[RMDB]
RNA sequence: GGGAACGACUCGAGUAGAGUCGAAAAAUUCUUAACCCAAAGCGACAUUGCUGCAGGUCUAUCCUUCAAGUUUGUAUGAAUGUGCUGACUGGAUUAAGGCCUCCCCCCUAGAAACUGCCUUGAGCCCUAGAACUGACUGAUUCGUCAGUCAGUUCUAAAAAGAAACAACAACAACAAC
Reactivity to DMS in 0.01 (KOAc 150mM, MgCl2 10mM, bicine 150mM(pH8.5), 24C), signal-to-noise 1, nucleotides 027 to 126: a110u000u030c080u000u000a040a080c010c000c020a040a130a100g000c030g010a080c070a050u000u010g030c060u000g000c110a050g000g000u000c060u010a130u000c030c040u000u010c130a100a070g010u000u010u010g030u010a040u000g020a090a020u020g020u000g000c030u010g000a080c100u010g000g030a060u000u000a040a060g010g020c020c020u000c000c000c000c010c000c000u030a100g000a070a040a070c120u000g000c020c030u000u010g020a130g020c000c040c040